Chemical mapping of a 177-nucleotide RNA with 2A3 and DMS. The reactions ran in a buffer of 150 mM KOAc, 10 mM MgCl2 and 150 mM bicine (pH 8.5), at 24 C. It was measured as part of the RMDB library TTRINS. 2A3 is a SHAPE reagent: it acylates the 2'-hydroxyl of flexible nucleotides of all four kinds.
RNA sequence: GGGAACGACUCGAGUAGAGUCGAAAAGAUAUGGAGACGGGUGGAGAUGAGAACUACGACACUAAAAACGUUUGUCGGAAACGACAAACGUUUUUAGGUCGCUCAUCGCUGACCGUCUCCUAAGUCAGGUAAAGGUUAACUUCGGUUAACCUUUACCAAAAGAAACAACAACAACAAC
Reactivity to 2A3 in 0.01 (KOAc 150mM, MgCl2 10mM, bicine 150mM(pH8.5), 24C), signal-to-noise 1, nucleotides 027 to 126: g000a030u110a040u160g000g000a010g020a000c000g040g030g060u180g040g050a110g000a030u000g030a010g040a100a010c120u300a050c300g030a000c140a040c300u030a000a000a000a000a000c000g000u000u000u000g000u010c020g010g070a010a110a010c020g000a000c000a000a000a000c000g000u000u000u000u000u000a000g010g010u010c000g020c000u010c010a000u020c010g050c010u010g020a000c010c000g010u000c000u010c010c000u000a010a000g030u020c070a030
Reactivity to DMS in 0.01 (KOAc 150mM, MgCl2 10mM, bicine 150mM(pH8.5), 24C), signal-to-noise 2, nucleotides 027 to 126: g020a040u000a300u020g000g010a020g010a010c010g010g000g010u010g000g000a070g000a010u000g010a030g000a150a060c150u010a300c020g010a010c010a150c000u000a010a000a010a010a010c000g010u000u000u000g020u010c010g000g010a080a080a210c010g020a010c000a000a010a000c010g000u000u000u000u010u000a010g010g010u000c000g000c000u000c010a000u000c000g000c000u000g000a080c010c010g040u000c000u010c000c000u000a010a050g000u000c060a140